Record summary: Chemical mapping of a 207-nucleotide RNA with DMS and 2A3.
[RMDB]
RNA sequence: GGGAACGACUCGAGUAGAGUCGAAAAAGAGGCGAUACGUCGCCUCAAGCUUGGUGCUUAGCUUCUUUCACCAAGCAUAUUACACGCGGAUAACCGCCAAAGGAGAAACACUGACUCCGGUCAGUGAGGAAGUUGGUUCGGUUCGCCGAACCAACAACAUAAGCAUUGUCUUCGGACAAUGCUUAUGAAAAGAAACAACAACAACAAC
Reactivity to DMS in 0.01 (KOAc 150mM, MgCl2 10mM, bicine 150mM(pH8.5), 24C), signal-to-noise 2, nucleotides 027 to 156: a090g000a010g040g010c030g030a050u000a090c190g040u000c000g040c010c010u010c010a000a030g020c050u000u010g000g030u000g000c050u010u000a070g030c090u000u000c000u000u000u000c030a020c010c010a000a040g020c020a050u000a000u010u000a150c050a140c130g010c000g030g040a220u010a120a170c010c060g000c030c020a060a110a050g000g020a060g010a200a130a190c000a050c000u000g010a020c000u000c170c050g060g050u000c040a020g010u000g000a010g030g010a070a140g010u000u000g020g000u000u000c010g000g020u000u000c300g000c000c010g000a000a000c000c020a030a000c000a080a150
Reactivity to 2A3 in 0.01 (KOAc 150mM, MgCl2 10mM, bicine 150mM(pH8.5), 24C), signal-to-noise 3, nucleotides 027 to 156: a000g010a000g000g000c000g010a010u020a040c150g120u010c000g000c000c000u010c000a000a000g000c000u000u000g000g000u000g000c030u050u070a060g040c010u010u030c000u000u030u010c000a000c010c000a010a000g000c000a000u050a020u050u160a050c050a030c020g010c000g000g040a070u100a300a290c000c010g000c030c020a060a020a020g020g000a000g000a010a080a000c000a000c000u000g000a000c010u020c030c000g040g000u000c000a000g020u040g010a070g040g100a180a070g000u000u000g010g000u000u000c010g010g070u030u020c180g040c060c000g000a020a000c000c020a000a000c000a010a000
The 2A3 profile rests on 2,941 reads. For DMS the reverse transcriptase was MarathonRT. Conditions: 150 mM KOAc, 10 mM MgCl2 and 150 mM bicine (pH 8.5), 24 C.